[RMDB]
RNA sequence: GGGAACGACUCGAGUAGAGUCGAAAACUCGCUAGGGGCUAGCGAUGAAGACCGAUACGGGUGCCGCUGUCGCGCCCGCUACUCCGUAAGAAUGAGGUUCUAAUGAAAAUCAGCGUUUUCAAGGGUGAUGAAGGAUAUGAAAACUAUCUAGCCCAUCGAAAUCUAACUCGUUCGCGAGUUAGAUUUCAAAAGAAACAACAACAACAAC
Reactivity to 2A3 in 0.01 (KOAc 150mM, MgCl2 10mM, bicine 150mM(pH8.5), 24C), signal-to-noise 2, nucleotides 027 to 156: c020u040c000g020c000u030a060g010g070g110g080c070u000a020g000c010g050a020u100g090a100a000g050a070c060c030g030a040u120a110c000g000g000g000u020g010c020c040g090c150u160g160u280c070g000c000g000c040c000c000g050c000u010a020c040u000c020c030g080u050a040a070g070a050a160u080g000a030g070g000u090u030c030u100a100a130u130g100a000a050a000a100u060c060a000g010c040g050u000u050u050u000c050a030a030g030g010g000u020g010a010u120g050a050a020g050g020a000u040a050u180g070a010a050a000a040c000u090a200u140c030u050a000g010c000c000c000a050u050c030